RNA sequence: GGGAACGACUCGAGUAGAGUCGAAAACACUCCAGGCUCCAUCUGCCUGCCCUGCCUGAGUUUUUCUUAUAUUUCUUUAGUUAAUAUUCUCUUGGCUGUUAAGUGUGCAUCUUUGUAAGCUGUCUGCAGCCUUUUUGGAACAGGGCAAGAGGGGAGAUGCAGUACUACUAUUCGUAGUAGUACUGCAAAAAGAAACAACAACAACAAC
Reactivity to DMS in 0.01 (KOAc 150mM, MgCl2 10mM, bicine 150mM(pH8.5), 24C), signal-to-noise 2, nucleotides 027 to 156: c040a140c040u010c040c030a120g000g020c000u000c040c090a080u010c060u000g010c060c010u000g000c010c010c010u000g000c010c010u010g020a160g010u000u000u010u000u020c010u000u000a180u000a100u020u000u010c020u010u000u000a180g010u010u000a090a110u000a070u000u000c030u000c080u000u000g020g020c010u010g010u000u050a080a050g020u020g050u000g040c020a090u000c110u000u000u010g040u010a040a150g000c020u010g010u000c090u000g020c040a040g040c000c020u000u000u010u000u000g030g030a060a110c030a040g010g020g040c020a080a070g010a140g000g010g010g010a090g010a130
Reactivity to 2A3 in 0.01 (KOAc 150mM, MgCl2 10mM, bicine 150mM(pH8.5), 24C), signal-to-noise 2, nucleotides 027 to 156: c040a020c030u020c020c020a090g050g000c000u020c020c020a210u040c020u040g100c010c050u000g020c000c010c000u020g030c000c010u110g050a120g040u020u040u040u060u050c030u070u170a130u070a180u300u230u040c060u050u230u080a050g020u040u060a110a050u080a170u280u000c000u000c030u020u090g000g000c000u000g020u050u100a100a040g030u070g070u110g060c000a030u070c160u090u260u120g150u090a000a100g010c010u020g060u080c000u060g050c010a010g000c000c020u010u040u020u070u050g080g000a180a090c000a000g020g000g000c000a000a000g010a010g010g020g000g000a000g030a000